[RMDB]
RNA sequence: GGGAACGACUCGAGUAGAGUCGAAAAGGUAGCUUUACUCUGUGCUUCCAUGAUAUGAGUGAAUGCAUAGAAAUUGCAGAGGAAUCCAAAGGACUGUGCUUCACCUAUGGCUCAGUGUUAUUUUAUAGAGGGCCUUAUUAUUCGUAAUAAGGCCCUCAAAAGAAACAACAACAACAAC
Reactivity to DMS in 0.01 (KOAc 150mM, MgCl2 10mM, bicine 150mM(pH8.5), 24C), signal-to-noise 2, nucleotides 027 to 126: g010g020u000a090g020c070u010u020u000a100c060u000c000u000g000u000g030c070u000u010c020c050a050u020g000a180u030a080u020g020a090g010u000g010a030a010u050g020c000a030u010a000g000a000a130a100u000u000g000c200a030g000a090g000g060a070a160u000c000c030a070a110a080g000g000a280c000u020g000u000g000c040u000u010c030a010c020c020u000a080u000g010g020c050u040c030a080g030u000g000u000u000a020u040u000u000u030a090u020a170
Reactivity to 2A3 in 0.01 (KOAc 150mM, MgCl2 10mM, bicine 150mM(pH8.5), 24C), signal-to-noise 2, nucleotides 027 to 126: g070g020u050a020g000c000u000u050u020a060c030u040c010u010g010u020g050c060u080u000c010c020a190u100g120a190u200a070u300g080a070g020u110g000a000a010u210g030c000a000u000a000g040a010a110a040u090u020g020c080a020g080a010g090g210a080a040u080c040c040a080a000a000g040g000a020c020u020g090u090g010c010u000u000c000a040c040c000u090a100u070g040g000c040u000c050a000g000u000g020u050u050a170u100u090u030u020a150u090a080
Structure probing data (DMS and 2A3) for a 177-nucleotide construct.
DMS (dimethyl sulfate) methylates the pairing face of unpaired adenines and cytosines.
For 2A3, 509 sequencing reads were counted.
For 2A3 the reverse transcriptase was SuperScript II with manganese.
It was measured as part of the RMDB libraries RFM100 and RFMREP.